[RMDB]
RNA sequence: GGGAACGACUCGAGUAGAGUCGAAAAGGGGUCACGAAGAGGUAUGAUCAGCGAAGAACAGACUGAAGCCUCCACGGUCUGGGAGCUGGUACUACCCACCUUCGUGACGGAGGCACCCAAACGACUAAAUCUUAAGUUCGCUUAAGAUUUAGUCGAACUUAGAAGUACAGUUCGCUGUACUUCUAAGAAAAGAAACAACAACAACAAC
Reactivity to DMS in 0.01 (KOAc 150mM, MgCl2 10mM, bicine 150mM(pH8.5), 24C), signal-to-noise 2, nucleotides 027 to 156: g030g020g030g000u000c000a010c010g000a020a010g000a080g020g000u000a030u000g020a080u000c030a040g030c020g010a120a110g000a130a230c020a080g010a020c040u000g020a050a120g020c050c000u000c020c030a280c000g010g000u000c010u000g020g000g010a140g020c000u000g010g000u000a000c060u000a040c010c000c220a170c120c020u000u000c000g030u000g050a030c000g000g020a030g030g040c040a160c000c010c020a080a100a220c040g000a020c000u010a000a030a010u010c000u000u000a020a010g000u000u000c300g020c000u000u000a010a000g000a020u000u000u010a000g030u000c000g000a000a110
Reactivity to 2A3 in 0.01 (KOAc 150mM, MgCl2 10mM, bicine 150mM(pH8.5), 24C), signal-to-noise 5, nucleotides 027 to 156: g010g020g080g020u000c000a000c000g010a000a010g150a130g170g000u030a040u180g030a010u020c000a000g040c010g130a270a020g000a020a000c000a000g000a000c000u030g040a100a010g030c010c000u000c000c010a010c010g000g010u000c000u000g000g010g000a010g000c000u000g010g020u050a150c010u020a000c010c010c020a280c080c020u000u000c000g000u000g000a000c000g000g010a000g000g000c000a040c000c000c000a070a060a030c020g000a000c000u000a010a000a000u000c000u000u010a020a020g010u030u140c260g070c170u000u000a010a000g000a000u000u000u000a000g000u000c000g000a000a000

Chemical mapping of a 207-nucleotide RNA with DMS and 2A3.
The DMS profile rests on 3,049 reads.
The RNA was probed in 150 mM KOAc, 10 mM MgCl2 and 150 mM bicine (pH 8.5) at 24 C.
Source: RMDB library RNAMAK, as collected in RNAgym.
For DMS the reverse transcriptase was MarathonRT.